RNA sequence: GGGAACGACUCGAGUAGAGUCGAAAAGGGGCGCGCCAAAGUCAGCUACCAGCUCACUGACGGAGGUCCCCACAACCGGGUCGCCAGGAACUGGGUGGCCCAGCUGCAGCUGGAGAUGCUGGCCGCCAUGAUAGCAACGUUUCGACGUUGCUAUCAUAAAAGAAACAACAACAACAAC
Reactivity to 2A3 in 0.01 (KOAc 150mM, MgCl2 10mM, bicine 150mM(pH8.5), 24C), signal-to-noise 2, nucleotides 027 to 126: g090g010g010g000c100g010c030g000c040c020a100a100a020g060u110c000a000g040c030u130a300c020c000a000g020c010u020c020a020c030u050g060a030c020g120g050a050g050g030u060c000c010c020c010a010c020a000a010c000c010g030g000g030u120c070g080c090c030a070g080g070a050a060c100u170g060g000g040u080g000g050c030c050c000a010g020c020u050g000c050a030g000c010u040g030g000a040g030a040u070g030c020u000g010g000c000c010g000c000c020
Reactivity to DMS in 0.01 (KOAc 150mM, MgCl2 10mM, bicine 150mM(pH8.5), 24C), signal-to-noise 4, nucleotides 027 to 126: g030g010g000g020c300g010c230g010c040c020a020a140a170g000u000c010a030g000c040u000a170c030c000a010g000c000u010c050a110c050u020g000a120c080g000g010a270g000g000u010c030c000c000c050a090c040a050a180c040c030g000g000g020u010c080g000c030c010a110g000g000a080a200c300u060g000g000g020u000g030g000c000c010c010a010g000c110u000g000c210a010g020c010u000g000g000a040g000a050u000g000c100u010g000g010c000c020g000c020c030
An RNA of 177 nucleotides, treated with 2A3 and DMS and read out base by base. For DMS the reverse transcriptase was MarathonRT. Conditions: 150 mM KOAc, 10 mM MgCl2 and 150 mM bicine (pH 8.5), 24 C. 2A3 adducts were read by reverse transcription with SuperScript II with manganese. Reactivities are given for positions 27 through 126.